[RMDB]
RNA sequence: GGGAACGACUCGAGUAGAGUCGAAAAUCGGUUCUUCUUCGAUCCGGACCGGCUCAUCUCGGCAAGGGGCGGCAGUCCUCAGUACUCUUACUCUUUCCUAUAAAGAGGAGACUGCUGGACUCGCCGCAAGGAGAAGUGUUCGCACUUCUCAAAAGAAACAACAACAACAAC
Reactivity to DMS in 0.01 (KOAc 150mM, MgCl2 10mM, bicine 150mM(pH8.5), 24C), signal-to-noise 9, nucleotides 027 to 129: u050c010g000g030u000u000c040u050u020c140u070u080c160g000a040u000c010c030g020g020a070c120c020g030g000c010u000c000a210u020c000u000c010g030g040c090a080a100g000g020g040g000c000g000g000c030a020g020u010c000c000u000c000a000g010u030a190c030u000c020u030u080a300c030u030c010u010u010u000c210c170u090a120u140a080a000a010g000a030g020g010a010g030a020c010u000g030c160u010g000g000a020c000u000c150g010c000c000g010c030a020a020g020
Reactivity to 2A3 in 0.01 (KOAc 150mM, MgCl2 10mM, bicine 150mM(pH8.5), 24C), signal-to-noise 9, nucleotides 027 to 129: u080c000g010g020u030u010c010u190u050c040u120u190c150g030a040u010c010c010g000g020a030c040c000g010g000c000u010c010a130u020c010u000c000g020g000c060a090a130g040g020g040g000c000g000g000c000a000g000u000c000c000u000c000a020g010u120a300c010u000c000u050u130a260c000u030c000u030u090u040c060c070u170a170u260a250a020a000g010a000g010g000a000g000a000c000u000g030c060u010g000g000a000c000u020c080g000c000c000g000c000a000a010g030